[RMDB]
RNA sequence: GGGAACGACUCGAGUAGAGUCGAAAAAUAAAGCAACGCGAGCAACGCGAGCAACGCGUGCAACGCGAGCAACGCGAGCAACGCGAGCAACGCGAGCAACGCGAGCAACGCGAGCAACGCGAAAAAACAAUGACAUUAGCUUCGGCUAAUGUCAUUGAAAAGAAACAACAACAACAAC
Reactivity to 2A3 in 0.01 (KOAc 150mM, MgCl2 10mM, bicine 150mM(pH8.5), 24C), signal-to-noise 2, nucleotides 027 to 126: a000u070a000a080a000g050c030a180a000c040g020c000g020a030g000c020a080a230c010g010c000g030a050g020c020a100a140c000g000c000g000u030g000c010a120a170c000g010c010g000a020g000c020a080a220c000g040c000g010a060g090c100a090a210c000g000c010g010a040g020c050a100a200c010g010c000g000a020g030c020a110a120c000g010c010g040a000g010c020a050a110c010g000c010g000a040g020c050a140a070c010g010c000g120a090a020a000a000a000a000
Reactivity to DMS in 0.01 (KOAc 150mM, MgCl2 10mM, bicine 150mM(pH8.5), 24C), signal-to-noise 1, nucleotides 027 to 126: a040u040a070a080a070g000c110a040a100c000g000c000g010a190g020c000a070a070c000g020c000g030a300g000c000a110a070c000g000c000g000u000g000c030a100a040c020g030c000g000a120g050c060a120a200c010g040c060g070a170g000c230a150a050c010g040c000g040a300g000c080a070a010c010g030c000g000a200g010c070a110a090c000g000c010g060a130g000c010a070a170c030g000c000g030a120g020c050a040a020c000g000c000g010a000a010a130a060a130a040